[RMDB]
The record gives the reactivity of an RNA of 177 nucleotides to DMS. Source: RMDB library M2PK50, as collected in RNAgym. Reactivities are given for positions 27 through 126. DMS adducts were read by reverse transcription with MarathonRT. For DMS, 944 sequencing reads were counted.
RNA sequence: GGGAACGACUCGAGUAGAGUCGAAAAGCUAGGCAUUUCGAUGCCUAGCGAGCGCAGAGUCUAUGCAUCUGUGAAUCACACAACAGCCGUGUCUAUGCGUGGGAGUAUCCCUCUUCGGAGGGAUAAAAUAAGCCCAAUUCUUCGGAAUUGGGCUUAUAAAAGAAACAACAACAACAAC
Reactivity to DMS in 0.01 (KOAc 150mM, MgCl2 10mM, bicine 150mM(pH8.5), 24C), signal-to-noise 1, nucleotides 027 to 126: g000c000u010a020g020g000c000a010u000u000u000c180g010a020u000g000c000c010u000a000g000c000g020a060g000c040g020c000a030g000a050g010u000c020u030a090u010g010c040a150u000c080u030g010u000g000a140a130u000c170a080c090a070c030a040a120c130a040g030c090c030g030u000g000u000c040u000a070u010g030c010g000u000g000g030g000a160g000u000a010u000c000c000c010u000c010u000u010c160g040g000a020g020g010g000a000u000a000a050a050